[RMDB]
RNA sequence: GGGAACGACUCGAGUAGAGUCGAAAAGGGGUCUCGCAGAGACCUCAGUAGCUUUUGACGCUCUGAAGCCUCCACGGAGCGAUAAGCUAUAGAGGUCGACGAAGCGAGACGGAGGCACCCAAACUUCGUAUACAAUCUUCGGAUUGUAUACGAAGAACGCUUAAACUAGCUUCGGCUAGUUUAAGCGAAAAGAAACAACAACAACAAC
Reactivity to 2A3 in 0.01 (KOAc 150mM, MgCl2 10mM, bicine 150mM(pH8.5), 24C), signal-to-noise 1, nucleotides 027 to 156: g070g050g030g030u000c000u000c000g000c010a000g020a000g000a010c000c000u000c020a000g010u000a000g010c020u180u180u300u260g060a020c010g000c020u000c010u020g050a100a010g000c000c000u000c000c000a000c000g000g020a000g010c010g040a070u090a220a050g000c000u000a010u020a090g020a010g000g000u000c000g160a300c010g010a030a000g020c010g000a000g000a000c000g000g000a000g010g000c000a020c020c020c030a020a040a080c000u000u020c000g000u010a000u000a000c000a020a010u000c030u010u160c300g100g010a000u000u000g000u010a010u000a010c000g000a000a000g000a010a000
Overview:
An RNA of 207 nucleotides, treated with 2A3 and read out base by base. Reactivities are given for positions 27 through 156.